[RMDB]
RNA sequence: GGGAACGACUCGAGUAGAGUCGAAAAGAUAUGGACCGUAUAGACAUGCUCGUCGGAAACGACAGAGCAACAGCUAUCGGUCCUAAGUCAAAAGAUGAAGACUGGUGUUCGCACCAGUCUUCAUCAAGAUAACUGUCUGCUUCGGCAGACAGUUAUCAAAAGAAACAACAACAACAAC
Reactivity to DMS in 0.01 (KOAc 150mM, MgCl2 10mM, bicine 150mM(pH8.5), 24C), signal-to-noise 2, nucleotides 027 to 126: g010a010u000a300u000g010g000a000c000c000g010u000a010u000a000g000a060c130a190u000g000c020u000c010g010u010c010g000g010a110a120a170c010g010a000c010a100g040a000g020c000a010a030c250a070g040c000u000a000u000c010g010g010u000c000c000u000a020a020g040u000c040a120a110a100a150g000a000u000g000a010a000g000a010c000u000g000g010u000g000u000u010c210g070c010a000c010c000a000g010u000c000u000u020c000a000u000c000a000a110